Structure probing data (DMS) for a 177-nucleotide construct. Values cover nucleotides 27 to 126. For DMS, 3,262 sequencing reads were counted. The data come from the RNA Mapping Database (RMDB), library M2PK90.

RNA sequence: GGGAACGACUCGAGUAGAGUCGAAAAGUACUAUGCGCGCCAUUAUUGAUGCAUGCUCCACCUCCCACUCCUUAAUAGUUGCUUUGAAGUUUCCUUUCGGUGGGUUCUGCAGCGUCUUUAUCAGAAACAUCUCAUAACUCUUCGGAGUUAUGAGAUGAAAAGAAACAACAACAACAAC
Reactivity to DMS in 0.01 (KOAc 150mM, MgCl2 10mM, bicine 150mM(pH8.5), 24C), signal-to-noise 3, nucleotides 027 to 126: g020u000a060c060u000a040u000g010c090g000c060g020c030c040a040u000u000a080u010u010g020a100u000g010c050a080u000g010c040u000c030c030a080c020c030u000c020c020c020a090c090u000c040c050u000u000a090a090u000a070g000u010u000g000c070u000u000u010g010a090a220g000u000u010u000c010c010u010u010u000c070g020g030u000g000g020g010u010u000c070u000g000c030a030g010c040g030u000c050u000u000u010a080u020c070a100g000a110a100a130